Chemical mapping of a 177-nucleotide RNA with DMS and 2A3. For 2A3 the reverse transcriptase was SuperScript II with manganese. Conditions: 150 mM KOAc, 10 mM MgCl2 and 150 mM bicine (pH 8.5), 24 C.
RNA sequence: GGGAACGACUCGAGUAGAGUCGAAAACUACCCCUGGCAAUCGACACGCGAUUACGUGCUGCUGGGCGUGGCCGCCGCCGUCGUGAUUGGGCUAUUCGGCUUCUGGCGCGGGCUGUAUUUCACCACGGCCUUGGUAGAUCUUCGGAUCUACCAAGGCAAAAGAAACAACAACAACAAC
Reactivity to DMS in 0.01 (KOAc 150mM, MgCl2 10mM, bicine 150mM(pH8.5), 24C), signal-to-noise 1, nucleotides 027 to 126: c030u030a210c070c050c000c030u000g020g000c050a130a050u000c100g000a240c020a010c110g020c060g010a130u010u000a110c040g000u000g020c030u000g000c040u010g000g010g000c170g000u000g000g010c120c040g000c100c080g010c060c040g010u010c120g000u000g020a120u000u000g000g010g000c000u040a160u030u000c050g040g000c000u000u000c110u030g010g000c080g020c050g000g000g050c030u000g000u000a070u010u000u010c090a110c010c000a140c150g000
Reactivity to 2A3 in 0.01 (KOAc 150mM, MgCl2 10mM, bicine 150mM(pH8.5), 24C), signal-to-noise 1, nucleotides 027 to 126: c040u120a100c010c020c000c000u010g020g020c030a050a130u080c110g070a050c080a040c110g030c070g210a160u060u220a070c010g000u010g050c050u020g000c020u040g050g050g000c070g010u040g060g010c050c010g040c000c040g000c000c010g000u020c010g000u010g030a160u060u170g070g030g000c000u040a100u100u130c030g100g000c000u130u000c070u160g050g030c010g030c070g000g020g000c000u000g020u060a130u010u030u060c100a130c070c010a050c040g000